[RMDB]
RNA sequence: GGGAACGACUCGAGUAGAGUCGAAAAACGCUGUCGAUGAUGAUCCGGGAGUCGAACUUGCUCGCCACCAUGAAGGCGAUCCGGGAGGGAAUGUUGGCCUUGAUGAGACCGGUGAUCACGUCGAUGGAUGCUACUUGGUCUUCGGACCAAGUAGCAUAAAAGAAACAACAACAACAAC
Reactivity to 2A3 in 0.01 (KOAc 150mM, MgCl2 10mM, bicine 150mM(pH8.5), 24C), signal-to-noise 2, nucleotides 027 to 126: a010c070g000c030u010g010u020c010g000a020u020g040a090u000g000a000u020c000c000g010g050g040a140g050u050c040g030a030a030c050u050u100g090c050u060c060g000c000c000a030c020c000a060u140g110a070a040g040g000c040g030a060u070c030c020g070g050g100a050g000g080g000a110a110u190g060u130u140g150g000c000c010u140u130g070a280u080g010a140g020a030c020c010g000g110u160g020a010u030c040a000c010g000u000c000g010a000u000g040g000
Reactivity to DMS in 0.01 (KOAc 150mM, MgCl2 10mM, bicine 150mM(pH8.5), 24C), signal-to-noise 2, nucleotides 027 to 126: a140c110g010c010u000g010u010c000g010a000u000g010a140u010g000a020u000c010c020g010g030g030a130g020u010c040g000a150a050c070u010u000g000c090u000c020g010c040c040a200c100c050a090u010g000a100a050g000g020c060g000a020u000c050c060g030g000g000a170g000g000g010a110a050u000g000u000u000g020g020c010c010u010u000g000a130u000g000a210g030a100c010c000g000g020u010g000a060u000c000a020c000g010u000c000g040a030u010g010g010